[RMDB]
Structure probing data (DMS and 2A3) for a 177-nucleotide construct. Values are in units of 0.01, from 0 to 300, in steps of 10.
RNA sequence: GGGAACGACUCGAGUAGAGUCGAAAACAACAAUACUUCGGUAUUGUUGAAAAUGGGCCGUCCAAGAAAAGUGCUUCUAAGAGUGGGAGCACUCGGCAAAAAAAACCAGUUGGUUCGCCAACUGGAACAUGCAACCUUAGUUCGCUAAGGUUGCAUGAAAAGAAACAACAACAACAAC
Reactivity to DMS in 0.01 (KOAc 150mM, MgCl2 10mM, bicine 150mM(pH8.5), 24C), signal-to-noise 1, nucleotides 027 to 126: c010a000a020c010a020a000u000a000c010u000u010c100g010g010u000a010u010u000g010u010u000g020a010a050a120a090u010g000g000g000c000c000g010u020c010c050a070a210g010a110a090a140a030g010u000g000c010u000u000c000u000a100a130g000a160g020u000g010g000g000a000g000c020a000c000u000c050g000g000c000a000a000a040a090a040a110a180a120c010c000a020g010u000u000g000g010u000u010c170g020c000c000a010a010c000u020g000g000a010a060
Reactivity to 2A3 in 0.01 (KOAc 150mM, MgCl2 10mM, bicine 150mM(pH8.5), 24C), signal-to-noise 2, nucleotides 027 to 126: c000a020a010c000a000a010u000a010c000u030u070c150g040g000u010a000u010u010g000u000u000g000a020a000a010a060u080g040g020g010c010c000g040u100c060c060a100a060g120a100a090a020a010g000u000g010c000u020u030c010u040a180a160g100a120g300u220g030g020g020a000g000c000a000c000u020c030g000g010c000a040a020a070a050a000a000a020a050c020c000a000g000u000u000g040g030u030u030c120g040c030c000a010a010c000u000g000g000a000a010

Overview: It was measured as part of the RMDB library M2PK50.